[RMDB]
Conditions: 150 mM KOAc, 10 mM MgCl2 and 150 mM bicine (pH 8.5), 24 C.
The record gives the reactivity of an RNA of 177 nucleotides to DMS and 2A3.
Reactivities are given for positions 27 through 126.
DMS adducts were read by reverse transcription with MarathonRT.
It was measured as part of the RMDB library OK2TRN.
RNA sequence: GGGAACGACUCGAGUAGAGUCGAAAACAAAACUGCUGAAACAGGGCUUCGAGCUGGAUGCGACCCACGGCACGGCGAUUGUGCUGGGCGAAGCAGGUAUCAACCCGCGUCUGGUAAACAAGGUGCACCCAAUUGUGGUAUUCGUACCACAAUUGGGAAAAGAAACAACAACAACAAC
Reactivity to DMS in 0.01 (KOAc 150mM, MgCl2 10mM, bicine 150mM(pH8.5), 24C), signal-to-noise 3, nucleotides 027 to 126: c110a060a030a080a100c110u010g000c050u010g020a110a100a120c160a080g000g010g010c050u000u010c040g030a100g010c010u020g010g000a020u010g000c040g000a130c060c020c010a190c180g000g010c020a010c010g000g000c170g010a080u020u020g030u000g030c030u000g010g000g050c110g010a080a050g020c020a040g010g020u020a060u000c140a060a110c040c020c040g000c130g000u010c030u000g010g020u000a060a060a090c140a080a150g010g020u010g000c090a170
Reactivity to 2A3 in 0.01 (KOAc 150mM, MgCl2 10mM, bicine 150mM(pH8.5), 24C), signal-to-noise 3, nucleotides 027 to 126: c030a010a100a020a070c030u060g020c010u110g050a080a080a040c040a110g010g010g030c030u080u040c070g090a050g000c040u050g090g070a070u070g040c030g020a130c020c020c060a070c090g030g020c000a010c030g080g070c130g240a190u110u160g000u020g000c000u010g010g020g050c010g020a050a010g010c030a010g050g010u040a090u250c030a060a030c010c020c000g000c000g040u000c030u000g060g040u150a130a090a040c020a070a030g010g020u030g000c020a020